[RMDB]
RNA sequence: GGGAACGACUCGAGUAGAGUCGAAAACGCCCAUGUGCUACGGUAAGGGUCUCACUCUAAGUGGGCUACACUGGCUAAUCUCCGUCUGAGGUUAGUUGGAAGAGCUUAAUCAGACUAGCUGAAUGGAAGCCUGUUACCGGGCCGAUGUUUAUGCGAAUCAUAUGUUGGAGUUCGCUCCAACAUAUGAAAAAGAAACAACAACAACAAC
Reactivity to DMS in 0.01 (KOAc 150mM, MgCl2 10mM, bicine 150mM(pH8.5), 24C), signal-to-noise 2, nucleotides 027 to 156: c050g000c020c010c040a190u020g010u030g000c010u010a080c010g030g020u000a090a140g030g020g010u000c030u020c050a080c030u000c050u020a060a080g030u030g000g000g010c000u000a080c050a300c030u000g020g010c020u000a040a010u000c000u010c010c130g010u010c130u010g020a020g020g010u000u000a010g020u000u000g020g000a080a200g020a080g000c030u000u000a100a130u000c070a100g010a120c070u000a180g050c040u000g000a100a080u010g020g010a060a070g000c020c000u000g010u010u000a060c110c030g010g030g030c010c000g000a200u000g010u000u000u000a120u040g010c060g000a190a210
Reactivity to 2A3 in 0.01 (KOAc 150mM, MgCl2 10mM, bicine 150mM(pH8.5), 24C), signal-to-noise 6, nucleotides 027 to 156: c100g030c020c020c010a040u120g130u140g010c020u070a190c000g000g000u020a040a010g040g000g040u030c040u040c050a060c000u050c020u030a130a090g040u040g010g020g000c000u060a030c050a020c060u000g010g000c000u000a010a020u030c010u030c040c080g300u070c110u180g000a010g010g000u030u000a000g000u000u020g030g020a100a070g020a000g010c020u070u100a040a030u130c030a030g060a090c040u070a060g060c030u030g050a070a050u070g040g050a060a020g020c000c000u120g180u220u030a020c020c010g000g000g000c010c010g010a040u090g040u030u080u050a080u160g080c040g080a060a070
An RNA of 207 nucleotides, treated with DMS and 2A3 and read out base by base. The 2A3 profile rests on 4,700 reads. The reactions ran in a buffer of 150 mM KOAc, 10 mM MgCl2 and 150 mM bicine (pH 8.5), at 24 C.